[RMDB]
RNA sequence: GGGAACGACUCGAGUAGAGUCGAAAAUUAGAAACUUCAAUGACAAGUCUUAUUGUGAGGCAUUCGUCGAAAUAAGAUGAAUUGAAGUGGAAUGAGUUAACCGUAAGACUUUGAAUUAAAAAAUUCUCGGUAUGUAAACGUUCGCGUUUACAUACCGAAAAGAAACAACAACAACAAC
Reactivity to 2A3 in 0.01 (KOAc 150mM, MgCl2 10mM, bicine 150mM(pH8.5), 24C), signal-to-noise 2, nucleotides 027 to 126: u240u070a000g020a010a030a000c020u000u020c010a000a000u020g110a080c020a140a110g030u000c000u010u000a000u000u100g140u050g100a190g030g000c060a060u250u250c140g070u000c010g030a020a030a000u050a020a000g000a020u070g070a020a010u000u000g000a000a000g020u020g000g100a030a170u100g000a030g050u040u140a060a060c020c040g010u080a100a000g030a060c000u090u090u090g070a110a070u070u170a040a070a090a080a040a060u090u000c020u000
Structure probing data (2A3) for a 177-nucleotide construct. For 2A3, 1,021 sequencing reads were counted.